Notes:
Structure probing data (DMS and 2A3) for a 177-nucleotide construct. The RNA was probed in 150 mM KOAc, 10 mM MgCl2 and 150 mM bicine (pH 8.5) at 24 C. Reactivities are given for positions 27 through 126. Reactivities are rounded to 0.1 and cut off at 0 and 3. It was measured as part of the RMDB libraries RFM100 and RFMREP.
[RMDB]
RNA sequence: GGGAACGACUCGAGUAGAGUCGAAAAUAUGGCCCGCGAAGGAUGCCCAGAAGGUACCCGUAGGUAACAAGUGACACUAUGGAUCUGAUCUGGGGCUGGAUACCUCUAUCUUGGUGAUCCAGUUAAAAUCUUUCCAUAGUUUCGACUAUGGAAAGAUAAAAGAAACAACAACAACAAC
Reactivity to DMS in 0.01 (KOAc 150mM, MgCl2 10mM, bicine 150mM(pH8.5), 24C), signal-to-noise 9, nucleotides 027 to 126: u040a090u020g010g010c010c010c010g010c170g000a110a110g020g010a080u010g010c000c000c000a010g010a070a300g000g000u000a080c100c000c000g010u010a010g000g000u040a020a020c010a120a050g000u050g000a210c300a010c010u000a000u000g000g000a040u000c010u000g010a100u020c010u000g000g000g000g010c000u000g000g000a010u000a020c010c000u010c290u030a110u050c210u040u010g000g010u000g000a020u000c000c000a010g010u010u020a040a050a100
Reactivity to 2A3 in 0.01 (KOAc 150mM, MgCl2 10mM, bicine 150mM(pH8.5), 24C), signal-to-noise 9, nucleotides 027 to 126: u270a090u060g100g050c000c000c000g020c060g050a070a040g150g050a070u120g040c000c000c000a000g000a020a010g020g000u040a060c000c000c000g020u000a000g000g010u040a010a010c040a200a300g020u020g030a010c010a000c010u000a000u010g000g000a010u000c010u020g030a140u040c000u000g000g000g000g000c010u010g000g000a000u010a020c010c010u030c030u150a240u210c110u090u120g040g000u070g100a040u000c000c000a000g000u010u010a040a040a000